Structure probing data (DMS and 2A3) for a 177-nucleotide construct.
[RMDB]
RNA sequence: GGGAACGACUCGAGUAGAGUCGAAAAUUCUGCAUUAAUGCCACAGUGGGGAUGGAGGCCGGGCCGUGGCCAGAGCAGAUACGUAGGCCCAUGAAAUUGAUGAACUGAGAGUUGCUCGCAGUCCUCAACGCUUUCCCUAAUUCGUUAGGGAAAGCGUAAAAGAAACAACAACAACAAC
Reactivity to DMS in 0.01 (KOAc 150mM, MgCl2 10mM, bicine 150mM(pH8.5), 24C), signal-to-noise 2, nucleotides 027 to 126: u030u010c010u000g010c020a080u060u010a140a100u030g000c000c010a060c090a150g010u030g010g030g010g000a070u040g000g020a040g000g010c080c020g000g030g040c020c000g020u010g000g030c020c190a040g010a120g000c070a040g010a090u030a020c070g000u010a120g000g040c000c030c020a110u000g020a080a050a100u050u000g000a040u010g030a110a060c040u010g000a100g020a060g000u010u010g010c040u000c000g000c000a060g000u010c020c040u030c020a090
Reactivity to 2A3 in 0.01 (KOAc 150mM, MgCl2 10mM, bicine 150mM(pH8.5), 24C), signal-to-noise 3, nucleotides 027 to 126: u040u000c000u010g010c000a030u020u080a130a070u190g020c010c030a030c000a040g090u050g020g020g000g040a050u100g020g070a070g020g000c050c000g030g030g000c020c030g010u030g000g000c040c020a000g010a010g000c020a010g000a030u080a070c100g060u050a040g140g010c000c000c000a040u150g030a050a070a040u110u070g020a020u080g030a070a090c030u020g000a010g010a000g100u060u070g030c050u040c010g020c000a000g000u040c000c000u020c040a000